Chemical mapping of a 177-nucleotide RNA with 2A3 and DMS. The 2A3 profile rests on 5,942 reads. Reactivities are given for positions 27 through 126. The RNA was probed in 150 mM KOAc, 10 mM MgCl2 and 150 mM bicine (pH 8.5) at 24 C. The data come from the RNA Mapping Database (RMDB), library M2PK50.

[RMDB]
RNA sequence: GGGAACGACUCGAGUAGAGUCGAAAAUCUUAGGAGUUCGCUCCUAAGAAAAGGGCGAGGCCGUGCCAGCUCUACGGAGCAAUACUCGGCCAGUCACUCAGAAUGCGCUACCCUUCGGGGUAGCGAACGCUAUUAGAAUCUUCGGAUUCUAAUAGCGAAAAGAAACAACAACAACAAC
Reactivity to 2A3 in 0.01 (KOAc 150mM, MgCl2 10mM, bicine 150mM(pH8.5), 24C), signal-to-noise 2, nucleotides 027 to 126: u000c000u000u010a000g000g000a010g000u060u100c150g120c070u000c010c000u000a000a010g010a010a010a000a010g030g000g020c030g060a240g010g010c000c010g000u000g060c020c060a060g010c000u000c000u020a050c250g090g000a010g000c000a010a010u050a100c020u010c020g020g010c030c000a000g020u000c000a020c020u090c020a070g130a190a100u190g070c000g000c020u000a000c000c000c000u000u030c220g030g000g000g000u000a000g000c000g000a000a000
Reactivity to DMS in 0.01 (KOAc 150mM, MgCl2 10mM, bicine 150mM(pH8.5), 24C), signal-to-noise 3, nucleotides 027 to 126: u000c010u010u000a000g000g000a010g030u000u000c250g010c010u010c000c000u000a010a010g000a020a040a120a100g000g000g000c000g000a100g010g000c010c010g010u000g020c140c110a300g000c000u000c000u010a110c160g020g010a000g000c010a080a100u010a110c070u010c010g010g000c000c000a100g020u000c040a080c030u000c070a120g020a060a110u000g010c030g010c000u000a000c000c000c000u000u020c210g020g000g000g000u010a000g000c000g000a010a020